[RMDB]
RNA sequence: GGGAACGACUCGAGUAGAGUCGAAAAUGGAAACCUAUAAGUGCCGAGAACACUCGCACUGACUUCGCUCUCGCUGCCUGAUCAGUGAUCGAAGGGUCAGCCCGGAUGUAGCCUUCCGUCCGGAUCCUGGCCUCGUUUAGAAGGCUUGCCGUACAGCGGAUGCUAAUUAGUUCGCUAAUUAGCAUCCAAAAGAAACAACAACAACAAC
Reactivity to DMS in 0.01 (KOAc 150mM, MgCl2 10mM, bicine 150mM(pH8.5), 24C), signal-to-noise 2, nucleotides 027 to 156: u010g010g010a120a070a140c020c000u010a120u010a060a010g000u000g030c030c010g020a200g030a090a100c120a040c020u010c050g020c040a030c020u000g010a060c040u000u000c010g020c010u000c020u000c040g020c060u000g010c040c050u010g010a080u010c030a060g020u010g010a070u000c030g000a050a050g010g000g000u000c010a020g030c090c020c000g030g000a060u000g000u000a060g010c010c010u000u000c020c010g010u010c000c000g020g010a050u010c080c020u000g010g010c000c030u000c080g030u000u010u000a080g010a080a000g020g010c020u000u000g040c000c020g020u000a150c110a120g020c300
Reactivity to 2A3 in 0.01 (KOAc 150mM, MgCl2 10mM, bicine 150mM(pH8.5), 24C), signal-to-noise 1, nucleotides 027 to 156: u150g020g030a080a070a020c040c000u160a130u050a170a030g000u000g180c210c100g030a030g010a220a080c220a070c120u010c020g000c000a000c010u010g040a040c000u000u000c000g000c020u010c000u000c010g010c000u000g010c040c060u180g050a220u220c000a000g010u000g010a040u300c000g000a000a000g000g000g000u010c010a000g010c000c000c000g010g000a000u000g010u010a010g000c000c000u010u000c000c000g000u000c000c000g000g000a020u140c020c000u000g020g000c000c010u070c030g040u050u080u070a030g000a000a000g010g000c000u000u040g010c010c010g110u130a090c050a050g000c050
The data come from the RNA Mapping Database (RMDB), library ARCHII. Chemical mapping of a 207-nucleotide RNA with DMS and 2A3. DMS adducts were read by reverse transcription with MarathonRT. 2A3 adducts were read by reverse transcription with SuperScript II with manganese. The RNA was probed in 150 mM KOAc, 10 mM MgCl2 and 150 mM bicine (pH 8.5) at 24 C. High DMS reactivity at an A or C suggests that its Watson-Crick edge is free.